[RMDB]
RNA sequence: GGGAACGACUCGAGUAGAGUCGAAAAUUCGAUCCGGACCGGCUCAUCUCGGCAAAAGGCGGCAGUCCUCAGUACUCUUACUCUUUCCUAUAAAGAGGAGACUGCUGGACUCGCCGCCCGAGCCCGAAACGACAGUUGUUCGCAACUGUCAAAAGAAACAACAACAACAAC
Reactivity to DMS in 0.01 (KOAc 150mM, MgCl2 10mM, bicine 150mM(pH8.5), 24C), signal-to-noise 9, nucleotides 027 to 129: u000u010c010g000a070u020c020c010g020g040a090c030c010g010g040c020u020c040a120u030c050u010c080g000g000c070a030a060a130a080g040g000c000g020g030c020a040g000u000c000c000u040c000a000g010u010a210c020u000c020u040u050a300c050u030c020u010u000u010c180c170u060a150u060a070a010a010g000a020g040g000a020g000a010c020u000g030c100u000g000g000a010c010u000c100g040c010c010g040c040c000c000g010a150g010c020c010c030g000a000a070a070c160
Reactivity to 2A3 in 0.01 (KOAc 150mM, MgCl2 10mM, bicine 150mM(pH8.5), 24C), signal-to-noise 9, nucleotides 027 to 129: u060u030c040g010a030u030c030c020g010g020a030c010c010g010g010c020u010c020a100u020c030u020c020g010g000c020a100a110a020a000g000g000c000g000g000c000a000g000u000c010c000u000c000a020g010u150a300c030u010c020u080u140a240c010u020c000u030u100u050c060c080u170a160u220a290a030a000g010a000g000g010a000g000a000c000u000g040c060u000g000g000a000c000u020c060g000c000c000g000c000c000c000g000a000g010c000c010c010g050a040a030a010c070
Structure probing data (DMS and 2A3) for a 170-nucleotide construct.
2A3 adducts were read by reverse transcription with SuperScript II with manganese.
High 2A3 reactivity points to a flexible backbone, as in loops and unpaired stretches.
DMS (dimethyl sulfate) methylates the pairing face of unpaired adenines and cytosines.
For 2A3, 89,720 sequencing reads were counted.